[RMDB]
RNA sequence: GGGAACGACUCGAGUAGAGUCGAAAAGAUAUGGAGGUAAGAACUACGACCUGCUAUAACAGCCGACGAAGCUUAUCGGAAACGAUAAGCAGAGGCUGCUAUAGCAGGUCGCUUACCUCCUAAGUCACUCUACAAUGUUGUUCGCAACAUUGUAGAGAAAAGAAACAACAACAACAAC
Reactivity to 2A3 in 0.01 (KOAc 150mM, MgCl2 10mM, bicine 150mM(pH8.5), 24C), signal-to-noise 1, nucleotides 027 to 126: g030a000u100a060u210g020g000a010g000g010u000a060a000g000a270a120c210u190a070c300g000a030c000c010u010g000c000u000a000u000a040a030c020a000g020c000c020g220a300c050g040a190a000g000c000u010u000a010u010c000g000g030a110a100a040c000g000a000u000a010a000g030c000a000g000a000g000g000c010u000g000c000u000a000u000a010g000c000a000g020g000u000c000g020c000u000u000a000c000c000u020c000c000u000a000a020g000u000c000a010
Reactivity to DMS in 0.01 (KOAc 150mM, MgCl2 10mM, bicine 150mM(pH8.5), 24C), signal-to-noise 4, nucleotides 027 to 126: g010a040u010a300u000g020g010a000g010g020u000a000a020g000a120a080c190u020a300c020g010a000c000c000u000g000c000u000a010u000a010a000c010a000g000c010c000g020a250c280g000a110a100g010c000u000u000a000u000c000g010g000a120a070a210c000g020a010u000a010a000g010c020a000g000a090g010g000c000u010g000c010u000a000u000a020g010c010a000g000g010u000c000g010c010u010u000a010c000c000u000c000c000u000a000a050g000u000c050a150